[RMDB]
RNA sequence: GGGAACGACUCGAGUAGAGUCGAAAACUAUCCCUUCGGGGAUAGAAAGCGUACUACGAAGCUUUUGACGCGAUGUUACUCCCCACCCUUCCCAAAUAGGAAGGAGGUAAUGCAUCGCGAUAAGCUUCGUAUCGCAAAAGGUCAAGUUCGCUUGACCCGUCGCAACUACGUUCGCGUAGUUGCGACGAAAAGAAACAACAACAACAAC
Reactivity to 2A3 in 0.01 (KOAc 150mM, MgCl2 10mM, bicine 150mM(pH8.5), 24C), signal-to-noise 1, nucleotides 027 to 156: c000u000a000u010c000c000c000u000u040c300g070g000g040g000a030u000a000g090a090a090a000g030c010g010u050a100c070u000a000c000g000a000a000g000c070u000u070u100u100g260a180c120g010c000g000a000u000g040u120u040a080c110u190c070c100c000c020a060c000c000c000u000u050c000c000c040a170a300a030u180a110g000g010a000a000g000g020a000g020g000u020a000a000u220g000c000a000u000c000g000c000g000a000u000a000a000g000c000u030u000c000g000u000a000u200c010g000c000a110a000a000a130g030g000u000c040a000a000g000u090u250c230g060c030u000u070g000a020c000c000